[RMDB]
RNA sequence: GGGAACGACUCGAGUAGAGUCGAAAACUGCAAGCUGGACCGCCGGGCUCAUGAAAUACCUGUCCGCGAGCCGGCUCCUGAAGCGCAUAGUGGCGGCUGCGUAACGCCACGCAAGAUCGUGGAUGGAACUGGUGACGGCAUUCGUGCCGUCACCAGUAAAAGAAACAACAACAACAAC
Reactivity to 2A3 in 0.01 (KOAc 150mM, MgCl2 10mM, bicine 150mM(pH8.5), 24C), signal-to-noise 1, nucleotides 027 to 126: c110u140g130c100a100a000g000c000u030g010g000a190c000c000g180c030c000g020g040g120c000u010c090a090u200g160a130a110a090u150a100c000c000u000g020u010c000c000g170c010g020a000g000c010c000g000g000c000u000c010c000u000g000a000a000g000c000g010c190a240u230a000g040u000g030g000c050g030g030c070u070g050c120g280u260a060a000c000g000c000c000a000c050g000c040a000a000g050a250u160c000g000u000g020g010a020u000g030g000a000
Source information:
Chemical mapping of a 177-nucleotide RNA with 2A3. It was measured as part of the RMDB library OK1LIB. The reactions ran in a buffer of 150 mM KOAc, 10 mM MgCl2 and 150 mM bicine (pH 8.5), at 24 C. Values cover nucleotides 27 to 126. The 2A3 profile rests on 447 reads.